The data come from the RNA Mapping Database (RMDB), library TTRDEL. Structure probing data (2A3 and DMS) for a 177-nucleotide construct. For DMS the reverse transcriptase was MarathonRT. The 2A3 profile rests on 1,438 reads. The reactions ran in a buffer of 150 mM KOAc, 10 mM MgCl2 and 150 mM bicine (pH 8.5), at 24 C.
[RMDB]
RNA sequence: GGGAACGACUCGAGUAGAGUCGAAAAGAUAUGGAGUAAAGACAUGAAGGUAGUUUAGCUCGGAAACGAGCACAAAUGUUCUUCAACAGCUUUACUCCUAAGUCAAAGGGCUCGUUCGCGAGCCCAAGACAGAAACAGGGUUCGCCCUGUUUCUGUCAAAAGAAACAACAACAACAAC
Reactivity to 2A3 in 0.01 (KOAc 150mM, MgCl2 10mM, bicine 150mM(pH8.5), 24C), signal-to-noise 1, nucleotides 027 to 126: g060a040u100a030u180g000g000a000g000u000a000a020a010g010a070c010a030u110g020a000a000g050g040u120a120g000u070u010u060a010g010c020u000c020g000g000a110a180a020c000g000a010g000c080a030c010a040a020a000u090g170u230u100c000u030u000c010a100a110c070a050g020c000u010u010u000a010c010u000c000c000u000a010a010g020u030c050a050a100a120g000g000g010c030u010c000g070u100u130c240g010c000g100a010g000c000c010c040a000a030
Reactivity to DMS in 0.01 (KOAc 150mM, MgCl2 10mM, bicine 150mM(pH8.5), 24C), signal-to-noise 1, nucleotides 027 to 126: g000a050u000a300u010g010g010a010g000u070a020a040a020g010a010c080a200u000g020a030a000g020g000u000a110g000u000u010u000a050g020c000u000c000g000g000a070a080a280c000g020a000g020c000a090c160a000a010a010u000g000u000u000c010u000u000c000a000a090c250a100g020c000u020u000u000a030c030u000c000c000u000a000a030g000u000c000a050a100a140g000g000g000c020u000c000g000u000u000c200g020c030g030a000g000c000c000c000a000a000